[RMDB]
RNA sequence: GGGAACGACUCGAGUAGAGUCGAAAACAACUACCACCAGCGCGGCGACGUGUUGGCGCACAGCCUGGGUCUGCUGGACGCGAAGGUACUGAUCGCAGAGUCCGACUUGGUCAGCGCCGUCGCCGAAGGUCCAUUCACGGUUCGCCGUGAAUGGACCAAAAGAAACAACAACAACAAC
Reactivity to 2A3 in 0.01 (KOAc 150mM, MgCl2 10mM, bicine 150mM(pH8.5), 24C), signal-to-noise 1, nucleotides 027 to 126: c010a020a040c030u070a070c030c040a060c010c030a040g050c060g000c010g030g000c000g010a000c030g060u100g030u030u060g010g000c000g120c020a110c040a020g010c020c010u180g030g020g030u000c010u110g040c030u020g020g030a030c030g040c040g150a140a100g190g000u130a160c030u060g090a120u060c020g000c020a040g040a050g240u010c050c020g020a050c010u000u020g000g000u070c030a030g000c000g040c020c090g000u010c040g000c000c020g000a040a010

Structure probing data (2A3) for a 177-nucleotide construct. For 2A3, 1,124 sequencing reads were counted. Source: RMDB library OK2TST, as collected in RNAgym. The RNA was probed in 150 mM KOAc, 10 mM MgCl2 and 150 mM bicine (pH 8.5) at 24 C.